[RMDB]
RNA sequence: GGGAACGACUCGAGUAGAGUCGAAAAGAUAUGGAGCUACAUUGAGAAGUGGCCCACGAUAGUACUUAGUCGGAAACGACUAAGUACUAUCGUGGGAAUCUUCAAUGAUGUGUGAGCUCCUAAGUCAUCCAAUAGCUAUGUUCGCAUAGCUAUUGGAAAAAGAAACAACAACAACAAC
Reactivity to DMS in 0.01 (KOAc 150mM, MgCl2 10mM, bicine 150mM(pH8.5), 24C), signal-to-noise 3, nucleotides 027 to 126: g010a060u000a300u000g000g010a010g020c000u000a020c000a000u000u010g010a300g020a010a020g000u000g010g010c000c000c000a020c000g000a010u000a000g000u000a000c010u000u000a010g050u000c000g000g010a150a110a270c020g010a030c010u000a010a010g030u000a010c000u000a000u000c000g040u000g020g010g000a040a020u000c000u000u000c010a150a180u010g000a080u000g000u000g000u020g010a030g030c010u010c000c000u010a020a070g020u000c070a140
Conditions: 150 mM KOAc, 10 mM MgCl2 and 150 mM bicine (pH 8.5), 24 C. Structure probing data (DMS) for a 177-nucleotide construct.